[RMDB]
RNA sequence: GGGAACGACUCGAGUAGAGUCGAAAAACGGACUACGGUCCGAAGGGUUCGGGGUACUAGUGUGAAUGCCCGGCUAGUACCCUGUGCUAGUGGUUUAUGUACUGAUGUUCAAUUAAGGGCAUUUGAAAAAAGACUCCUAACUUCGGUUAGGAGUCAACGGUUAGUUUAUCUUCGGAUAAACUAACCGAAAAGAAACAACAACAACAAC
Reactivity to 2A3 in 0.01 (KOAc 150mM, MgCl2 10mM, bicine 150mM(pH8.5), 24C), signal-to-noise 1, nucleotides 027 to 156: a000c000g000g030a000c020u050a010c120g150g000u000c020c000g010a050a030g100g010g000u070u110c040g000g000g000g000u000a000c000u000a010g000u030g050u090g170a080a010u010g010c000c000c000g030g030c000u000a000g000u000a000c020c000c000u010g010u020g000c030u070a070g050u070g100g020u120u190u020a150u190g130u040a080c080u080g190a070u070g100u230u180c110a160a030u200u190a250a300g000g000g000c000a000u040u000u070g060a010a010a000a010a000a000g000a000c000u000c000c000u000a010a000c000u090u070c250g030g000u010u000a000g000g000a000g000u000c000a000a010

The data come from the RNA Mapping Database (RMDB), library M2RFPK.
An RNA of 207 nucleotides, treated with 2A3 and read out base by base.
2A3 is a SHAPE reagent: it acylates the 2'-hydroxyl of flexible nucleotides of all four kinds.
For 2A3, 521 sequencing reads were counted.